Chemical mapping of a 177-nucleotide RNA with DMS and 2A3. Source: RMDB library M2PK50, as collected in RNAgym. For 2A3, 4,064 sequencing reads were counted. 2A3 is a SHAPE reagent: it acylates the 2'-hydroxyl of flexible nucleotides of all four kinds.
RNA sequence: GGGAACGACUCGAGUAGAGUCGAAAAUCUGCAAUCUUCGGAUUGCAGAAAAUACGGAUCCAUACGGAUCCUUACGGAUCCAUACGGAUCCAUACGGAUCCAAAACGUACCUCUUCGGAGGUACGAACAUAACCUGCAACUUCGGUUGCAGGUUAUGAAAAGAAACAACAACAACAAC
Reactivity to DMS in 0.01 (KOAc 150mM, MgCl2 10mM, bicine 150mM(pH8.5), 24C), signal-to-noise 3, nucleotides 027 to 126: u000c000u000g030c000a010a020u000c000u000u010c180g040g000a010u000u000g010c000a010g000a000a030a060a080u010a070c160g000g000a050u000c010c000a080u020a040c120g000g000a000u000c000c000u010u000a060c170g010g020a020u000c000c000a090u000a080c160g000g000a000u000c000c000a010u020a010c100g010g010a080u010c010c000a100a060a090a160c020g000u000a000c000c010u000c000u000u020c170g000g000a020g010g010u000a010c010g000a040a080
Reactivity to 2A3 in 0.01 (KOAc 150mM, MgCl2 10mM, bicine 150mM(pH8.5), 24C), signal-to-noise 1, nucleotides 027 to 126: u010c000u000g000c000a000a000u000c000u030u040c080g150g000a000u010u000g000c010a000g000a010a000a000a000u090a010c030g060g000a020u030c010c020a000u030a070c030g000g010a000u020c000c010u010u050a040c030g000g000a000u000c000c010a010u060a120c100g000g000a000u000c000c000a000u020a010c020g040g000a030u010c020c010a070a000a020a020c010g010u000a000c000c010u020c000u050u060c220g120g000a010g000g000u000a000c000g000a000a000

Conditions: 150 mM KOAc, 10 mM MgCl2 and 150 mM bicine (pH 8.5), 24 C. Reactivities are given for positions 27 through 126.